[RMDB]
RNA sequence: GGGAACGACUCGAGUAGAGUCGAAAAGAUAUGGAGCUAAACUUGCGAUGAAAUGUAACACAAUCGGAAACGAUAGUGUUACAUGGAGCAAGUAGCUCCUAAGUCAAAACGCCCGUUCGCGGGCGAAGGGAUGAUUAUAGUUCGCUAUAAUCAUCCCAAAAGAAACAACAACAACAAC
Reactivity to DMS in 0.01 (KOAc 150mM, MgCl2 10mM, bicine 150mM(pH8.5), 24C), signal-to-noise 4, nucleotides 027 to 126: g010a030u000a300u000g010g010a010g010c000u000a060a080a130c000u000u000g010c000g000a130u020g000a140a120a000u000g000u010a010a000c000a010c000a110a020u000c010g020g000a110a100a140c000g020a010u000a060g020u000g010u000u000a010c000a000u000g000g000a040g030c000a010a010g020u000a020g010c000u000c000c010u000a010a060g010u000c020a060a090a170a210c030g000c010c000c010g030u000u010c180g020c030g020g020g010c000g000a020a030
Reactivity to 2A3 in 0.01 (KOAc 150mM, MgCl2 10mM, bicine 150mM(pH8.5), 24C), signal-to-noise 3, nucleotides 027 to 126: g030a000u050a020u160g020g000a000g020c010u100a250a130a230c010u010u000g000c030g180a220u030g000a050a080a010u010g000u010a010a010c020a000c000a050a070u020c010g040g000a080a050a020c020g000a010u030a070g010u010g000u010u000a010c000a000u000g000g000a010g000c000a000a000g010u000a000g000c000u000c000c000u000a040a010g010u000c020a030a020a190a190c010g000c020c050c020g020u050u060c300g010c050g120g030g000c070g090a080a190